[RMDB]
An RNA of 207 nucleotides, treated with 2A3 and DMS and read out base by base. For DMS the reverse transcriptase was MarathonRT. The reactions ran in a buffer of 150 mM KOAc, 10 mM MgCl2 and 150 mM bicine (pH 8.5), at 24 C.

RNA sequence: GGGAACGACUCGAGUAGAGUCGAAAAUGCCUGCCUGACCCCAGGCAGGAGUGGUUUGUGCUCAAGGCCGGGGCAAGUGUGAGCGCCAUGAGGGAGCUGGAUUGGCAUGUGUGACCUUCUGCUCCCAGAGCUGGUGUGACUCUAGUGUGAUGGGGUGGGAGUGAAUUAAUUUCGAUUAAUUCACUCCAAAAGAAACAACAACAACAAC
Reactivity to 2A3 in 0.01 (KOAc 150mM, MgCl2 10mM, bicine 150mM(pH8.5), 24C), signal-to-noise 2, nucleotides 027 to 156: u050g060c000c010u000g010c000c000u110g000a150c000c000c000c010a000g000g000c000a000g020g000a010g030u070g000g110u020u140u060g090u110g010c020u030c070a060a040g060g020c050c010g000g010g010g000c070a080a070g060u060g040u060g110a040g020c000g030c000c000a050u060g010a120g060g010g000a010g050c070u090g070g090a160u120u220g080g040c000a060u130g130u090g110u130g290a230c000c000u030u030c000u020g000c000u000c000c000c000a000g000a040g000c040u010g030g040u040g050u070g060a060c010u000c010u040a130g030u070g020u020g120a110u120g010g010g000g020u060g010
Reactivity to DMS in 0.01 (KOAc 150mM, MgCl2 10mM, bicine 150mM(pH8.5), 24C), signal-to-noise 1, nucleotides 027 to 156: u000g010c000c010u000g010c010c010u000g010a040c060c060c030c010a170g000g000c000a010g000g010a040g020u000g070g020u010u000u010g000u000g000c040u010c070a070a150g020g040c020c030g050g030g020g030c000a040a080g000u010g010u000g000a230g030c050g040c060c030a090u000g010a290g000g000g000a040g040c000u020g040g010a090u000u000g020g000c040a070u000g020u070g000u010g010a060c030c010u030u000c000u010g000c030u000c010c010c040a010g000a160g030c080u010g020g070u020g030u000g030a100c020u010c030u010a080g010u010g020u000g000a120u010g000g010g020g050u020g030